Notes
Structure probing data (2A3 and DMS) for a 177-nucleotide construct.
[RMDB]
RNA sequence: GGGAACGACUCGAGUAGAGUCGAAAAUCGCUAUUGCGCGUUGCCGUUCACAGAGCUGCCUCCAGGGCUUGUUUUGGUAAUGCCUUUCUCCCAUUUAUGGGCUACCCUAGUGGCCUGAGUACAUGACCGUGCUUCAUGUUUUCGAACAUGAAGCACGAAAAGAAACAACAACAACAAC
Reactivity to 2A3 in 0.01 (KOAc 150mM, MgCl2 10mM, bicine 150mM(pH8.5), 24C), signal-to-noise 4, nucleotides 027 to 126: u100c030g010c080u090a070u040u200g040c070g000c000g060u030u050g000c010c010g050u110u110c040a070c050a060g110a030g060c040u080g050c010c000u110c010c040a050g000g070g000c000u030u050g030u010u090u020u030g030g000u060a070a050u130g010c010c000u010u080u030c060u040c030c000c000a040u110u160u040a150u170g020g000g000c000u030a050c030c000c040u040a060g000u010g070g000c000c010u010g000a030g040u130a060c090a150u130g100a030c050
Reactivity to DMS in 0.01 (KOAc 150mM, MgCl2 10mM, bicine 150mM(pH8.5), 24C), signal-to-noise 2, nucleotides 027 to 126: u070c090g030c090u020a040u010u000g000c120g000c000g020u010u000g000c030c020g000u000u000c130a090c150a080g000a090g010c030u000g000c060c020u000c070c060a030g000g000g010c010u010u010g010u000u000u020u040g050g000u000a040a020u000g000c000c020u000u000u010c140u000c000c000c000a110u030u030u030a150u000g000g020g010c020u000a060c040c140c090u020a200g010u060g010g000c010c000u030g010a060g000u010a060c170a070u000g010a170c110

The reactions ran in a buffer of 150 mM KOAc, 10 mM MgCl2 and 150 mM bicine (pH 8.5), at 24 C.